[RMDB]
RNA sequence: GGGAACGACUCGAGUAGAGUCGAAAAGCUAAUAAACCAAAGCAGGACCCCGAUGUCAAAAUGCUUAAAAUGGUCAAAUCCGCUGGGACGCCGUCUCUGCAUCUGACAUGCCUUUUCCAUUUCCCAGCCUCAUGCAGAACAUAAACCUGCAUCAGGACUACGCAGUAGGCUUCGGCCUACUGCGUAGAAAAGAAACAACAACAACAAC
Reactivity to 2A3 in 0.01 (KOAc 150mM, MgCl2 10mM, bicine 150mM(pH8.5), 24C), signal-to-noise 2, nucleotides 027 to 156: g010c070u060a120a060u110a300a300a130c060c030a100a000a000g010c000a010g080g000a050c030c010c030c130g090a080u100g000u000c010a020a040a080a130u040g020c020u070u130a110a100a100a050u210g010g030u020c060a000a000a200u030c030c060g050c080u050g000g050g000a040c110g000c080c080g110u010c010u000c000u060g020c000a050u030c050u070g040a010c010a010u060g050c010c000u020u040u060u030c050c060a030u070u050u050c000c000c000a040g090c020c010u050c000a010u000g010c000a000g050a120a040c050a080u160a110a080a010c000c000u000g000c000a000u000c040a000g000g040a020